RNA sequence: GGGAACGACUCGAGUAGAGUCGAAAAGCGUUCGGAUUGCGAGGCAUCAAGAGGUCACGGACGAACUGAAACGUGAGAGUUUGAAGCGUGAAGUUGACCGUGUAUUAGCUCAGAGCGGGCUUAUAAAGGGUAUUUCAAUCUUCGGAUUGAAAUACCCAAAAGAAACAACAACAACAAC
Reactivity to DMS in 0.01 (KOAc 150mM, MgCl2 10mM, bicine 150mM(pH8.5), 24C), signal-to-noise 2, nucleotides 027 to 126: g030c050g000u000u000c080g000g000a150u000u000g010c100g010a110g020g010c060a090u000c090a140a070g000a070g000g010u000c000a030c050g000g000a150c030g000a020a050c030u000g000a060a100a000c030g010u010g030a200g000a180g050u000u010u040g000a180a290g020c000g010u100g000a170a020g000u060u000g030a090c000c010g000u030g030u050a020u040u000a040g000c020u000c030a170g000a080g030c060g010g000g000c050u010u000a030u080a060a060a090
Reactivity to 2A3 in 0.01 (KOAc 150mM, MgCl2 10mM, bicine 150mM(pH8.5), 24C), signal-to-noise 2, nucleotides 027 to 126: g020c000g020u010u000c000g010g030a180u070u090g030c090g000a060g050g000c000a010u020c090a110a080g160a050g030g010u010c010a000c010g020g040a040c010g000a020a010c040u010g060a100a050a050c040g030u020g010a100g000a010g110u190u230u300g100a010a000g000c000g000u070g050a050a000g010u070u040g020a050c000c020g000u010g000u110a120u020u190a010g000c000u000c020a000g000a000g060c120g000g020g000c070u210u000a050u180a220a060a080
Chemical mapping of a 177-nucleotide RNA with DMS and 2A3. The reactions ran in a buffer of 150 mM KOAc, 10 mM MgCl2 and 150 mM bicine (pH 8.5), at 24 C. 2A3 is a SHAPE reagent: it acylates the 2'-hydroxyl of flexible nucleotides of all four kinds. For DMS the reverse transcriptase was MarathonRT.